[RMDB]
RNA sequence: GGGAACGACUCGAGUAGAGUCGAAAAUCAUCCAAGUGGCGAGCUCCUCCACAGCAGCACUUGUGCUAGAGUUGCUGAUUUUUCUAAUGGAUGCCAUUCAGACUAACUUUCAGCAGGCAUCAGCGGAAGUAGGUCAGUAGUUCGCUACUGACCUACUAAAAGAAACAACAACAACAAC
Reactivity to DMS in 0.01 (KOAc 150mM, MgCl2 10mM, bicine 150mM(pH8.5), 24C), signal-to-noise 2, nucleotides 027 to 126: u020c110a090u000c030c030a090a080g030u000g010g020c050g010a070g000c030u000c040c020u000c030c060a160c090a070g010c020a090g000c030a040c030u000u000g010u000g000c080u000a080g000a060g000u000u010g010c000u010g000a040u000u000u010u000u000c050u020a100a170u010g010g000a020u010g020c030c010a050u000u000c150a050g000a080c170u020a100a080c160u000u010u000c120a040g010c040a120g000g000c020a040u000c030a040g000c100g010g000a060
Reactivity to 2A3 in 0.01 (KOAc 150mM, MgCl2 10mM, bicine 150mM(pH8.5), 24C), signal-to-noise 2, nucleotides 027 to 126: u070c000a000u000c000c000a120a000g070u040g100g080c030g010a030g070c030u000c010c010u040c010c020a040c010a000g020c000a010g000c010a010c090u090u110g090u170g080c090u090a050g000a020g040u030u110g000c000u000g050a070u100u150u000u000u000c010u060a040a040u070g110g070a060u040g100c010c000a040u130u130c030a000g030a080c030u070a120a030c040u150u170u130c070a090g000c010a020g010g000c000a050u020c010a030g080c010g040g030a050
The record gives the reactivity of an RNA of 177 nucleotides to DMS and 2A3. Conditions: 150 mM KOAc, 10 mM MgCl2 and 150 mM bicine (pH 8.5), 24 C.